[RMDB]
RNA sequence: GGGAACGACUCGAGUAGAGUCGAAAAUCUAUGUGGAUGGCAAUUUCUGAAUUAUCCCUUCAUGGACUGAAUUCUUAUACAUCUUUCUUUCUUUGUUGUACUAAUCCAAAAGUGUGCAUGUCAGGUACGUCUAUCUGGUGUUCGCACCAGAUAGACGAAAAGAAACAACAACAACAAC
Reactivity to DMS in 0.01 (KOAc 150mM, MgCl2 10mM, bicine 150mM(pH8.5), 24C), signal-to-noise 1, nucleotides 027 to 126: u000c010u000a030u010g020u000g050g000a050u010g000g000c210a050a100u000u000u000c030u000g010a090a070u010u000a040u000c030c070c080u010u000c090a100u000g000g010a060c100u000g010a060a080u000u000c090u010u020a130u000a100c150a070u000c050u000u010u000c060u000u000u000c030u010u020u000g000u000u000g000u000a110c070u010a030a090u020c050c040a030a090a080a050g000u020g020u000g010c030a050u000g000u000c070a060g020g000u000a100